[RMDB]
RNA sequence: GGGAACGACUCGAGUAGAGUCGAAAAACCAUCCUAUUCGUAGGAUGGUGCACCAUUGCCGAUUCUAUAUAAUACCGCAGGCGGAAAAGCGGUUCAAAUAAGGAACUUGUCAGUUCGCUGACAAGAACAUAAGGUCCAAGUUCGCUUGGACCUUAUGAAAAGAAACAACAACAACAAC
Reactivity to 2A3 in 0.01 (KOAc 150mM, MgCl2 10mM, bicine 150mM(pH8.5), 24C), signal-to-noise 4, nucleotides 027 to 126: a010c010c000a010u000c000c000u010a030u020u080c210g060u070a000g000g010a010u000g010g000u010g000c020a030c030c020a100u060u240g010c010c010g060a060u120u000c080u040a120u030a070u030a260a240u070a100c000c010g010c050a060g110g040c060g110g050a050a120a030a020g000c000g030g000u010u080c030a050a080a050u170a100a100g080g000a050a080c010u000u010g000u010c000a020g020u000u100c200g000c090u000g000a000c000a000a020g000a000a000
Reactivity to DMS in 0.01 (KOAc 150mM, MgCl2 10mM, bicine 150mM(pH8.5), 24C), signal-to-noise 6, nucleotides 027 to 126: a010c000c000a000u010c000c000u000a020u000u010c210g030u010a010g000g010a010u000g000g010u000g010c150a170c040c020a130u010u010g000c040c030g010a140u000u010c070u000a110u000a080u000a090a110u010a040c020c020g030c010a110g000g000c070g020g000a070a030a090a120g010c010g000g010u010u010c160a050a080a090u010a080a180g010g010a110a140c020u000u000g010u000c000a010g010u000u010c160g030c000u000g000a010c000a000a010g010a070a170

Description
Chemical mapping of a 177-nucleotide RNA with 2A3 and DMS. The 2A3 profile rests on 5,246 reads. Source: RMDB library M2PK50, as collected in RNAgym. DMS adducts were read by reverse transcription with MarathonRT. The DMS profile rests on 7,118 reads.